[RMDB]
The record gives the reactivity of an RNA of 177 nucleotides to 2A3 and DMS.
RNA sequence: GGGAACGACUCGAGUAGAGUCGAAAAGACACUUACAUAGCGAAAGUUGUAAGGGACUAGUUAUCAAUCUUUCGCUAUGCACGUAUUGAUAACUAGUGUUGCAAUUGCGUGCUAUUGAGUGCAACAGGCACAGGACUCUAUUCGUAGAGUCCUGUGCAAAAGAAACAACAACAACAAC
Reactivity to 2A3 in 0.01 (KOAc 150mM, MgCl2 10mM, bicine 150mM(pH8.5), 24C), signal-to-noise 1, nucleotides 027 to 126: g030a010c000a000c020u020u010a030c020a130u010a000g010c000g140a300a010a010g020u010u010g050u080a030a080g110g080g030a030c010u010a010g060u040u010a010u030c000a040a020u030c060u060u190u110c040g000c120u100a120u180g020c020a020c010g040u100a010u000u010g040a030u020a000a000c000u000a000g020u020g030u070u010g000c010a000a060u000u090g110c110g100u210g040c020u000a000u040u040g000a000g010u030g000c020a090a070c040a050g120
Reactivity to DMS in 0.01 (KOAc 150mM, MgCl2 10mM, bicine 150mM(pH8.5), 24C), signal-to-noise 1, nucleotides 027 to 126: g010a150c020a000c000u000u000a040c300a000u000a000g010c000g010a080a190a020g020u000u020g020u010a090a070g000g020g020a060c040u000a030g000u000u000a010u000c040a000a020u000c070u000u000u020c080g000c040u010a020u020g010c090a110c080g000u000a040u000u000g000a040u000a010a010c000u000a000g000u000g000u000u000g000c000a020a000u000u000g010c300g030u010g000c000u000a040u000u010g020a020g000u010g000c040a090a070c170a080g000

The reactions ran in a buffer of 150 mM KOAc, 10 mM MgCl2 and 150 mM bicine (pH 8.5), at 24 C.